[RMDB]
RNA sequence: GGGAACGACUCGAGUAGAGUCGAAAAGGUGCUGGAUUCGUUCGAGCGCGGCACGGCGGACCAGCUGCUGCGCGUGCUGCUGGAGAAGGCGCCGCCGAUGUCGCUGCUGGUGCCGCUCUCGCUGUACCGCGAGGACGCGCGCCUGGCGGGGUCGGCGGAGACAACGCUUGUUCGCAAGCGUUGUCUCAAAAGAAACAACAACAACAAC
Reactivity to 2A3 in 0.01 (KOAc 150mM, MgCl2 10mM, bicine 150mM(pH8.5), 24C), signal-to-noise 2, nucleotides 027 to 156: g050g000u030g000c000u020g040g080a100u070u020c040g070u180u180c110g110a040g050c030g000c000g020g000c020a000c030g000g020c020g040g090a200c140c090a110g020c090u060g030c030u020g000c200g020c000g030u000g000c000u020g030c020u070g010g000a040g010a020a020g010g000c000g010c000c000g000c000c010g020a010u060g180u300c000g010c020u090g030c070u050g040g000u010g010c020c000g000c000u020c000u000c010g000c020u110g110u300a140c050c110g000c000g000a000g010g000a030c010g040c000g000c010g000c010c010u020g010g000c010g000g000g010g000u000c000g000g000c000g010
Overview:
Chemical mapping of a 207-nucleotide RNA with 2A3. Conditions: 150 mM KOAc, 10 mM MgCl2 and 150 mM bicine (pH 8.5), 24 C. Source: RMDB library OK3TST, as collected in RNAgym.